[RMDB]
RNA sequence: GGGAACGACUCGAGUAGAGUCGAAAACGCGGUUGAGGACAAACUCUUCGCGGUCUUUCCAGUGGGGAUCCGAUAUCCGUACACCAUCAGGGUACGAGCUAGCCCAUGGCGUACACCAUCAGGGUACGACUAGUAGAUCUCGUACACCAUCAGGGUAGUGAUAACCAUUGUUCGCAAUGGUUAUCACAAAAGAAACAACAACAACAAC
Reactivity to 2A3 in 0.01 (KOAc 150mM, MgCl2 10mM, bicine 150mM(pH8.5), 24C), signal-to-noise 5, nucleotides 027 to 156: c020g010c030g050g140u080u050g010a020g030g100a180c140a170a210a150c070u000c000u020u020c020g000c000g000g020u020c040u020u040u010c000c020a040g040u100g050g060g000g010a040u040c060c040g060a040u040a020u170c020c030g090u080a040c080a070c070c010a080u140c090a060g020g000g000u000a000c000g000a010g010c030u060a050g000c030c020c020a060u060g000g000c020g010u010a010c180a220c030c020a100u240c220a190g000g000g020u010a010c000g070a080c030u010a020g050u020a050g020a060u040c000u000c000g000u000a000c110a130c020c000a060u110c100a060g080g000g000u040a050
Reactivity to DMS in 0.01 (KOAc 150mM, MgCl2 10mM, bicine 150mM(pH8.5), 24C), signal-to-noise 2, nucleotides 027 to 156: c010g030c010g020g050u000u000g010a100g020g010a140c170a120a120a100c000u000c000u020u010c000g020c020g000g010u000c040u000u000u000c020c040a170g030u000g020g030g020g010a050u000c040c030g010a170u000a090u000c010c020g030u000a080c070a160c030c010a070u000c090a140g020g030g000u010a020c020g010a070g010c060u010a130g040c020c010c030a060u000g010g000c000g010u010a050c060a050c020c010a080u010c090a140g040g010g050u000a040c020g000a050c020u000a120g020u010a090g000a090u000c010u000c020g010u000a050c020a070c020c020a140u000c040a060g020g010g030u000a140
The data come from the RNA Mapping Database (RMDB), library PDB130. An RNA of 207 nucleotides, treated with 2A3 and DMS and read out base by base. For DMS, 4,652 sequencing reads were counted. For 2A3 the reverse transcriptase was SuperScript II with manganese. Reactivities are given for positions 27 through 156. The 2A3 profile rests on 4,885 reads. The reactions ran in a buffer of 150 mM KOAc, 10 mM MgCl2 and 150 mM bicine (pH 8.5), at 24 C.